This 177-nucleotide RNA was probed chemically with DMS and 2A3.
[RMDB]
RNA sequence: GGGAACGACUCGAGUAGAGUCGAAAAGACUGUCAUGUCAGCGAAUGGAAGCGGUUUUUGGAAACAUUGGAUAUCAACAAAAGAUGGAGAUUGCGGCUUACCAUUGGUAUCAACAAGAGACGGAGCGCUAAUGCCCGUCAUUCGUGACGGGCAUUAGAAAAGAAACAACAACAACAAC
Reactivity to DMS in 0.01 (KOAc 150mM, MgCl2 10mM, bicine 150mM(pH8.5), 24C), signal-to-noise 3, nucleotides 027 to 126: g000a160c040u000g000u010c090a120u000g020u000c090a080g010c050g000a060a050u000g020g000a070a050g000c050g010g020u000u000u010u020u000g020g010a200a090a040c050a090u010u000g000g000a160u000a080u010c100a060a080c110a030a040a090a130g010a070u000g010g000a130g020a070u010u010g010c060g010g020c070u000u000a040c030c030a050u000u000g000g020u010a060u010c060a060a050c090a070a060g000a120g010a040c030g000g010a070g020c190g010
Reactivity to 2A3 in 0.01 (KOAc 150mM, MgCl2 10mM, bicine 150mM(pH8.5), 24C), signal-to-noise 2, nucleotides 027 to 126: g010a030c000u030g040u140c000a100u080g040u060c030a000g030c010g070a030a040u040g020g020a060a020g050c000g000g070u020u040u000u110u100g070g050a080a060a000c010a030u000u090g030g000a000u030a030u260c050a050a100c040a040a130a010a030g050a050u050g010g010a040g010a020u000u080g050c040g090g020c040u060u070a100c020c000a010u000u040g100g010u110a090u180c020a030a070c000a050a030g000a010g000a050c020g030g020a040g000c050g020
Source: RMDB library OK2TST, as collected in RNAgym.
DMS adducts were read by reverse transcription with MarathonRT.
The reactions ran in a buffer of 150 mM KOAc, 10 mM MgCl2 and 150 mM bicine (pH 8.5), at 24 C.
DMS (dimethyl sulfate) methylates the pairing face of unpaired adenines and cytosines.